Background:
The record gives the reactivity of an RNA of 207 nucleotides to 2A3 and DMS. The data come from the RNA Mapping Database (RMDB), library OK3TST. For DMS, 4,317 sequencing reads were counted.
[RMDB]
RNA sequence: GGGAACGACUCGAGUAGAGUCGAAAACACAUGGUUAAAUGGAGUUAACUGAGUACUUGCCCUUUGACCCAUUAGAUUUUACAGGGAUAUUAGCAGUGAAAGAUGAAUUGUAUGCUCAUCAGCAUGCCCUAAAUGGUAGAAAAUGUCUAUUUGUUAGGUGAAUUACACAUUUCGAUGUGUAAUUCACAAAAGAAACAACAACAACAAC
Reactivity to 2A3 in 0.01 (KOAc 150mM, MgCl2 10mM, bicine 150mM(pH8.5), 24C), signal-to-noise 3, nucleotides 027 to 156: c080a000c020a070u140g020g010u040u080a050a070a040u150g050g000a080g040u080u110a090a040c070u080g100a010g040u080a070c030u070u100g000c000c000c000u020u020u040g060a040c020c000c020a040u070u120a040g070a170u030u040u060u090a070c070a010g000g020g020a000u020a070u120u090a010g000c040a030g030u050g140a050a080a020g020a010u080g040a010a120u120u080g020u070a020u070g000c010u020c050a120u020c000a020g020c010a010u040g000c000c000c020u060a100a080a030u080g030g000u020a030g050a050a080a010a040u080g040u020c030u080a130u110u100u070g040u040u040a040g010
Reactivity to DMS in 0.01 (KOAc 150mM, MgCl2 10mM, bicine 150mM(pH8.5), 24C), signal-to-noise 2, nucleotides 027 to 156: c050a090c070a080u000g000g010u010u000a050a040a140u000g000g030a130g020u000u000a080a100c060u010g020a080g030u000a090c040u000u000g030c000c010c010u000u000u000g000a150c050c000c040a160u010u000a150g020a130u000u000u000u010a100c100a050g000g000g010a070u000a060u000u010a080g020c020a070g030u000g000a070a070a080g010a050u010g000a060a080u000u000g030u000a050u000g030c000u000c050a070u000c060a110g010c030a060u000g010c020c040c040u000a050a030a080u000g010g010u000a060g010a050a040a080a110u000g010u000c030u000a160u000u000u010g020u000u000a130g040